RNA sequence: GGGAACGACUCGAGUAGAGUCGAAAAGGGGGUACACUAGUCGAUAGACUAAAGGUCUAACAAGAAUACGAUACCACGUGUAUGUCUGUUAGAGUAGACACGGAGUCUAACGAAUUCGUAGACGAAAGGGACGUGAGAACGUCCGGCGGAAGCACCGUCUACGCGUCUGAUUCGUCAGACGCGUAGAAAAAGAAACAACAACAACAAC
Reactivity to 2A3 in 0.01 (KOAc 150mM, MgCl2 10mM, bicine 150mM(pH8.5), 24C), signal-to-noise 2, nucleotides 027 to 156: g000g000g000g000g030u010a000c020a000c060u020a030g060u040c050g150a140u080a090g030a000c000u060a280a030a000g030g010u030c000u010a010a010c050a020a040g070a020a000u030a030c020g070a060u140a200c090c050a060c090g090u140g000u050a000u030g300u000c000u000g020u020u030a040g010a030g040u130a030g060a010c060a050c160g090g050a070g010u040c000u050a060a010c050g030a010a020u060u090c030g000u020a020g000a030c040g030a040a020a060g050g010g000a010c000g000u030g030a060g060a090a020c010g000u030c000c020g000g000c020g010g010a080a030g000c000a000c070c030g010
Reactivity to DMS in 0.01 (KOAc 150mM, MgCl2 10mM, bicine 150mM(pH8.5), 24C), signal-to-noise 2, nucleotides 027 to 156: g030g000g020g090g000u000a040c040a050c070u000a080g000u010c070g040a230u020a130g000a070c000u000a080a130a110g020g000u000c010u000a060a050c030a040a180g020a050a060u000a050c050g030a100u000a070c060c030a050c090g070u000g020u000a060u000g000u020c040u010g010u000u000a110g000a110g020u010a080g020a070c100a030c040g000g010a200g010u000c040u000a000a060c080g000a050a120u000u000c040g050u000a070g010a040c000g000a060a090a050g000g010g020a040c000g040u010g000a300g000a190a040c040g030u010c020c020g010g020c060g010g020a090a180g020c030a090c010c020g010

Chemical mapping of a 207-nucleotide RNA with 2A3 and DMS. 2A3 adducts were read by reverse transcription with SuperScript II with manganese. DMS adducts were read by reverse transcription with MarathonRT. The RNA was probed in 150 mM KOAc, 10 mM MgCl2 and 150 mM bicine (pH 8.5) at 24 C.